[RMDB]
An RNA of 207 nucleotides, treated with 2A3 and read out base by base. It was measured as part of the RMDB library OK3TST. The RNA was probed in 150 mM KOAc, 10 mM MgCl2 and 150 mM bicine (pH 8.5) at 24 C. Values cover nucleotides 27 to 156.

RNA sequence: GGGAACGACUCGAGUAGAGUCGAAAAAUUAAUGUCAUGGAUCAUGGUCAAAUGGUCGAUAGACUUAGAACUUUCCUAACAAGAGCUCAGCUAUUUACAAAAGAACUUGACUUUAUUUGGACUUGCCACAUGAUAACCAACAGCAAUUUCGAGGUAAAAGUACGAGGAUGUUCGCAUCCUCGUACUUAAAAGAAACAACAACAACAAC
Reactivity to 2A3 in 0.01 (KOAc 150mM, MgCl2 10mM, bicine 150mM(pH8.5), 24C), signal-to-noise 1, nucleotides 027 to 156: a000u160u140a000a120u170g020u020c000a000u090g110g000a060u050c000a040u010g020g100u170c050a110a000a000u010g000g010u000c020g020a020u050a080g020a070c040u000u000a000g010a060a020c010u000u040u080c000c030u010a000a000c090a050a010g020a020g060c030u000c010a000g040c010u110a060u230u120u070a140c070a010a050a000a110g030a140a020c000u050u050g050a000c000u040u160u040a060u040u040u120g050g000a020c000u080u130g100c110c080a000c000a040u130g060a060u080a000a020c010c010a010a090c000a020g090c030a070a070u070u110u130c030g120a030g000g040u050a070a230